[RMDB]
Description:
Chemical mapping of a 177-nucleotide RNA with DMS and 2A3. 2A3 adducts were read by reverse transcription with SuperScript II with manganese. The RNA was probed in 150 mM KOAc, 10 mM MgCl2 and 150 mM bicine (pH 8.5) at 24 C. It was measured as part of the RMDB library RFMREP.

RNA sequence: GGGAACGACUCGAGUAGAGUCGAAAAAGCAAGGGUGUGUGACUCUAUAAUCCAAGCUGUGCUAGUAGAUCGCUUAAGAUCGAAGUGCACACCAAGCAUUCGAUUGUAGAGUCAUACACCUCCACUGGAUGUCUAAAUCGUUCGCGAUUUAGACAUCAAAAGAAACAACAACAACAAC
Reactivity to DMS in 0.01 (KOAc 150mM, MgCl2 10mM, bicine 150mM(pH8.5), 24C), signal-to-noise 2, nucleotides 027 to 126: a080g000c240a200a110g000g030g000u010g000u010g010u000g020a010c010u000c000u000a000u000a020a010u010c000c070a140a090g000c040u020g030u010g000c010u010a080g000u010a100g000a010u000c000g030c300u010u020a060a110g030a010u000c010g000a120a210g030u000g000c000a030c000a090c140c130a130a050g020c010a110u000u000c300g000a000u010u000g010u000a020g000a000g020u000c000a030u010a010c010a000c000c010u000c060c040a130c170u000g000
Reactivity to 2A3 in 0.01 (KOAc 150mM, MgCl2 10mM, bicine 150mM(pH8.5), 24C), signal-to-noise 3, nucleotides 027 to 126: a000g140c100a080a080g030g000g000u000g000u000g000u010g000a010c000u010c000u000a000u000a010a000u010c020c010a020a010g010c040u030g000u000g010c010u010a020g010u000a010g020a000u010c010g050c200u200u300a150a040g000a000u000c010g010a010a010g090u260g000c000a010c010a010c030c080a040a010g010c010a220u000u050c020g000a000u000u010g010u020a010g000a010g000u010c000a000u000a000c000a000c000c000u010c000c000a060c020u070g160